[RMDB]
An RNA of 177 nucleotides, treated with DMS and 2A3 and read out base by base. For DMS the reverse transcriptase was MarathonRT. The 2A3 profile rests on 1,645 reads. The data come from the RNA Mapping Database (RMDB), library VIROID. In probing experiments dimethyl sulfate is read out at A N1 and C N3, which are open when not base-paired.

RNA sequence: GGGAACGACUCGAGUAGAGUCGAAAACGACGAAGGGGUGCAUUCCGAAGAGCGGGCCUGGCGUCGUCCGGCUCCCUCGACCGCACCGGAGCGCUAGAAAAGGUCCUCGGACUUUCUUCUAUCUCCGCAACAUAGGCUAGUUCGCUAGCCUAUGUUGAAAAGAAACAACAACAACAAC
Reactivity to DMS in 0.01 (KOAc 150mM, MgCl2 10mM, bicine 150mM(pH8.5), 24C), signal-to-noise 2, nucleotides 027 to 126: c030g010a070c090g010a120a050g000g010g000g000u000g010c040a140u000u010c100c080g000a130a140g020a070g020c300g010g000g000c040c010u000g030g010c040g030u010c170g000u020c040c000g010g000c020u000c010c090c010u000c010g020a110c080c110g010c080a060c100c020g010g000a020g000c040g010c010u000a010g000a020a000a030a010g000g010u000c010c010u020c300g010g000a030c010u000u000u000c150u000u000c000u000a020u010c000u000c000c030g010
Reactivity to 2A3 in 0.01 (KOAc 150mM, MgCl2 10mM, bicine 150mM(pH8.5), 24C), signal-to-noise 1, nucleotides 027 to 126: c000g110a000c020g010a040a060g110g000g000g000u050g040c020a070u200u080c080c030g060a110a030g030a010g050c050g010g030g050c020c060u100g070g000c050g150u200c020g000u060c030c020g010g000c000u030c040c000c000u010c010g050a030c000c090g030c020a030c000c040g000g010a000g000c040g000c030u030a000g000a000a040a000a000g000g000u020c000c010u020c120g050g030a010c000u060u010u020c050u010u000c010u060a150u300c010u000c000c000g000